Chemical mapping of a 177-nucleotide RNA with 2A3 and DMS. For 2A3, 4,769 sequencing reads were counted. 2A3 is a SHAPE reagent: it acylates the 2'-hydroxyl of flexible nucleotides of all four kinds. 2A3 adducts were read by reverse transcription with SuperScript II with manganese.
RNA sequence: GGGAACGACUCGAGUAGAGUCGAAAAGCCAAGUGAGAUUAAAGCCUCAUCUAAUGGUUACCUAUUGCGUGUGGGAUUGCCUCAUUAGAACUGAUAUACGUACCAGGUAGUUACGACCCAUGGAUAGCUAAGGGUGUACUUUCGAGUACACCCUUAGAAAAGAAACAACAACAACAAC
Reactivity to 2A3 in 0.01 (KOAc 150mM, MgCl2 10mM, bicine 150mM(pH8.5), 24C), signal-to-noise 6, nucleotides 027 to 126: g020c000c000a030a010g030u040g030a000g020a040u160u180a080a050a020g120c010c000u010c000a090u070c060u120a180a090u070g040g010u050u070a100c000c000u040a070u060u200g050c060g020u050g010u040g050g040g020a120u050u100g020c010c000u070c020a060u090u150a070g030a110a030c070u080g110a030u030a040u050a220c020g010u010a020c010c040a000g010g060u020a030g100u040u070a050c060g040a110c020c000c030a040u070g050g070a130u120a110g050
Reactivity to DMS in 0.01 (KOAc 150mM, MgCl2 10mM, bicine 150mM(pH8.5), 24C), signal-to-noise 5, nucleotides 027 to 126: g010c010c010a050a120g020u020g000a030g000a060u010u030a100a100a150g010c080c000u020c010a020u010c060u040a120a070u010g010g000u000u010a110c010c010u000a080u020u020g010c040g000u000g030u000g000g010g010a090u010u010g010c030c030u000c060a020u000u010a060g000a060a070c070u020g010a070u010a070u030a080c070g010u010a050c060c040a070g010g030u000a050g010u010u010a050c080g000a120c020c000c010a060u010g000g010a090u030a080g000